[RMDB]
Structure probing data (DMS and 2A3) for a 177-nucleotide construct. Reactivities are given for positions 27 through 126.

RNA sequence: GGGAACGACUCGAGUAGAGUCGAAAACUGCUGAAGAGGCAAGAGACAGAAUGAUAUCCAGUAAGCACAUGUUUAUUCAUGGGUGUCAGCUUUGCUUUUCCUGGAGUCUCUUGGUGAUGGAGUGUGCACUGAAUCUUGUGUUCGCACAAGAUUCAGUAAAAGAAACAACAACAACAAC
Reactivity to DMS in 0.01 (KOAc 150mM, MgCl2 10mM, bicine 150mM(pH8.5), 24C), signal-to-noise 3, nucleotides 027 to 126: c070u000g000c040u000g000a100a060g010a130g010g000c020a060a050g010a040g010a050c030a090g010a090a120u000g000a050u000a050u000c010c010a030g010u010a030a050g020c000a140c170a070u010g010u010u000u000a060u020u000c110a110u000g000g010g010u010g010u010c090a030g000c100u010u000u000g000c090u010u000u020u000c120c020u020g010g000a170g000u000c020u000c010u000u000g010g010u000g010a140u000g000g000a080g020u010g020u000g030c130
Reactivity to 2A3 in 0.01 (KOAc 150mM, MgCl2 10mM, bicine 150mM(pH8.5), 24C), signal-to-noise 1, nucleotides 027 to 126: c020u070g020c010u060g070a090a010g030a070g150g060c010a030a000g000a000g000a000c020a000g170a170a070u060g100a040u020a010u040c010c000a000g050u040a050a000g080c010a040c040a180u120g020u040u020u100a080u170u140c110a100u040g000g030g080u030g020u010c020a020g010c040u000u040u070g060c000u100u110u150u090c050c000u030g030g010a020g040u000c000u000c000u030u040g090g090u070g040a040u140g010g030a040g050u100g010u040g030c000
For 2A3, 960 sequencing reads were counted. The RNA was probed in 150 mM KOAc, 10 mM MgCl2 and 150 mM bicine (pH 8.5) at 24 C. The DMS profile rests on 3,794 reads. Values are in units of 0.01, from 0 to 300, in steps of 10.